The record gives the reactivity of an RNA of 177 nucleotides to 2A3.
The RNA was probed in 150 mM KOAc, 10 mM MgCl2 and 150 mM bicine (pH 8.5) at 24 C.
It was measured as part of the RMDB library OK1LIB.
The 2A3 profile rests on 577 reads.
Values are in units of 0.01, from 0 to 300, in steps of 10.
[RMDB]
RNA sequence: GGGAACGACUCGAGUAGAGUCGAAAAGUACUCACGCUUCCUCGUCGACGAGGAUCCACUAUGAAGCGGUGGGGAGGGAGAAGAUGUACGUUGACGAUGAAGAGUCUGCAGCACUUCAACAGGGAUGGCGCGUAGCUACGUUCGCGUAGUUACGCGCAAAAGAAACAACAACAACAAC
Reactivity to 2A3 in 0.01 (KOAc 150mM, MgCl2 10mM, bicine 150mM(pH8.5), 24C), signal-to-noise 1, nucleotides 027 to 126: g020u010a010c040u010c020a090c080g060c000u000u000c030c040u000c020g100u060c040g060a110c030g040a060g150g020a000u020c000c020a030c060u160a150u300g170a160a010g010c070g000g080u160g090g000g000g000a170g000g000g000a040g010a060a040g010a040u070g000u050a050c050g000u000u040g020a010c000g000a060u130g080a020a060g040a020g070u030c040u040g000c020a020g030c010a010c050u100u100c000a100a110c060a190g080g040g030a070u140g070